[RMDB]
RNA sequence: GGGAACGACUCGAGUAGAGUCGAAAAAGCGGCGGCCGCAGAGGCAUCCAGCCCUCACCCCCCGAUCCGGGACCGCCGGGCUCCCCGCGCUCUAGGGCAGGCGGAGAGGGAAGCGGCCGAACAGCUCCAAGACAGACAGGUUCGCCUGUCUGUCUUGAAAAGAAACAACAACAACAAC
Reactivity to DMS in 0.01 (KOAc 150mM, MgCl2 10mM, bicine 150mM(pH8.5), 24C), signal-to-noise 2, nucleotides 027 to 126: a070g000c010g020g000c000g000g000c000c000g100c000a200g020a090g020g000c030a230u060c090c150a200g000c050c010c010u000c020a300c070c050c080c020c020c040g000a060u040c040c090g000g000g020a230c070c020g000c030c030g010g000g000c030u010c050c040c040c050g020c110g030c000u010c090u040a150g030g020g020c010a050g000g000c080g040g000a040g000a170g000g010g000a100a080g000c020g000g000c000c010g010a050a090c050a120g020c030u000c180
Reactivity to 2A3 in 0.01 (KOAc 150mM, MgCl2 10mM, bicine 150mM(pH8.5), 24C), signal-to-noise 2, nucleotides 027 to 126: a000g020c010g070g010c000g000g010c000c010g000c030a010g010a000g030g000c000a010u060c030c050a020g040c050c010c000u020c050a080c010c040c000c010c000c010g010a060u010c040c000g000g010g180a210c020c010g000c010c020g040g020g000c010u100c000c010c000c000g010c010g000c010u080c060u180a110g070g020g020c060a040g050g020c000g010g020a040g010a010g020g000g020a030a000g000c000g020g000c020c010g010a020a070c010a050g000c010u000c000
Annotation:
The record gives the reactivity of an RNA of 177 nucleotides to DMS and 2A3. For DMS the reverse transcriptase was MarathonRT. For 2A3, 1,511 sequencing reads were counted. Conditions: 150 mM KOAc, 10 mM MgCl2 and 150 mM bicine (pH 8.5), 24 C. The data come from the RNA Mapping Database (RMDB), library RFM100.